[RMDB]
This 207-nucleotide RNA was probed chemically with DMS and 2A3. For 2A3, 7,302 sequencing reads were counted. It was measured as part of the RMDB library OK3TST. Reactivities are given for positions 27 through 156.
RNA sequence: GGGAACGACUCGAGUAGAGUCGAAAAAUGGAGAAAGCAGAGAUGAUCACCACGAGCUUGGUGUACCACGGCACGGAUUGCAAUCCCGUGGAGAUGAGAAACAGGAGGAAGAGGAUGGUGUAGAUUCCGGCGAUGCAUUUCCAACGUUUGGCAUCCAACCUGAUAAUAAAUUCGUUUAUUAUCAGGUAAAAGAAACAACAACAACAAC
Reactivity to DMS in 0.01 (KOAc 150mM, MgCl2 10mM, bicine 150mM(pH8.5), 24C), signal-to-noise 4, nucleotides 027 to 156: a110u000g020g000a100g030a070a080a130g030c060a080g010a150g020a090u000g000a090u000c030a100c020c030a080c050g020a100g040c100u000u010g020g020u000g030u000a040c010c010a080c050g000g030c040a120c100g020g000a150u000u010g010c060a090a130u000c030c020c010g030u010g000g010a070g030a080u000g000a100g010a110a030a070c060a110g010g000a070g030g010a080a140g000a090g010g000a040u000g010g030u010g020u000a080g010a220u000u000c040c020g030g030c050g000a060u000g010c020a100u000u000u000c030c020a050a100c130g000u000u000u000g020g010c040a070u000c000c030a130
Reactivity to 2A3 in 0.01 (KOAc 150mM, MgCl2 10mM, bicine 150mM(pH8.5), 24C), signal-to-noise 6, nucleotides 027 to 156: a010u060g020g000a030g020a030a070a020g030c040a010g020a010g010a110u080g040a040u100c020a010c030c010a040c090g060a040g040c080u070u040g010g010u030g020u030a050c010c020a030c030g020g000c070a020c100g060g010a060u060u170g030c050a060a080u080c020c010c020g010u030g010g010a070g010a040u110g010a020g040a070a070a030c050a030g030g020a010g010g010a040a010g030a010g040g010a020u070g010g030u030g010u030a040g010a050u090u020c030c010g040g000c060g020a010u010g010c010a020u030u010u000c040c030a030a010c060g010u030u060u040g020g000c010a010u020c030c010a020